RNA sequence: GGGAACGACUCGAGUAGAGUCGAAAAGCCUACAGUUGGGCAUCGUUUGAGUCACUGUCGGUCGGAUAAGAUGCGCAAGUAUCGCAUCCGACAUUAUUGCGGCACUGGAGUUUGGCAACAGUGCCGACUGAGGAUUUAGUUUCGACUAAAUCCUCAGAAAAGAAACAACAACAACAAC
Reactivity to DMS in 0.01 (KOAc 150mM, MgCl2 10mM, bicine 150mM(pH8.5), 24C), signal-to-noise 7, nucleotides 027 to 126: g000c010c000u010a050c050a030g010u010u010g040g020g010c040a080u000c080g010u000u010u020g010a080g010u000c010a070c030u000g010u000c170g020g010u000c000g000g000a020u000a080a260g010a010u000g010c010g000c300a080a120g010u000a020u000c000g000c300a030u000c000c000g000a000c010a060u020u000a090u010u010g010c010g010g000c000a010c000u000g000g000a140g010u000u010u010g010g010c060a050a100c010a010g000u000g010c000c000g010a020
Reactivity to 2A3 in 0.01 (KOAc 150mM, MgCl2 10mM, bicine 150mM(pH8.5), 24C), signal-to-noise 8, nucleotides 027 to 126: g040c010c000u010a000c010a040g030u150u230g110g030g000c070a210u060c060g140u090u210u300g030a030g000u010c010a010c030u020g040u090c140g070g000u010c000g010g000a020u020a050a040g000a000u020g000c000g010c050a070a060g010u020a010u030c010g000c040a010u020c000c000g000a000c010a000u020u040a040u020u180g070c010g000g010c000a000c010u000g030g010a090g080u130u300u220g230g000c020a040a010c000a030g010u000g020c000c000g000a010

The record gives the reactivity of an RNA of 177 nucleotides to DMS and 2A3. 2A3 adducts were read by reverse transcription with SuperScript II with manganese. The reactions ran in a buffer of 150 mM KOAc, 10 mM MgCl2 and 150 mM bicine (pH 8.5), at 24 C. DMS adducts were read by reverse transcription with MarathonRT.